The record gives the reactivity of an RNA of 207 nucleotides to 2A3. The 2A3 profile rests on 2,032 reads.
[RMDB]
RNA sequence: GGGAACGACUCGAGUAGAGUCGAAAAACGGUCGUACGCGACCGAGGCGCGGCUAGGUCGACGGACCGAACAAUGGCAUCCCGCAUUCUGCCAUCCGCCGCGCAGCUUCUUCUCAAACGGUGCGAAAAAAAGUAGGACACCUUCGGGUGUCCUACAACCUUUGGUUGUACUUCGGUACAACCAAAGGAAAAGAAACAACAACAACAAC
Reactivity to 2A3 in 0.01 (KOAc 150mM, MgCl2 10mM, bicine 150mM(pH8.5), 24C), signal-to-noise 2, nucleotides 027 to 156: a000c020g000g000u000c010g030u060a040c220g000c030g170a000c000c000g010a040g000g010c000g000c000g030g000c000u000a000g010g010u020c030g110a150c180g210g000a000c000c000g000a000a000c000a000a020u000g000g030c000a030u070c120c080c000g000c020a050u300u040c010u030g010c000c000a000u000c010c040g000c000c000g000c000g000c000a000g000c010u120u080c020u030u000c010u030c030a080a090a090c080g000g010u020g010c020g050a090a010a010a000a000a000a040g000u000a000g000g000a000c000a010c020c000u030u060c150g040g000g000u000g000u010c000c000u000a000c000a000a000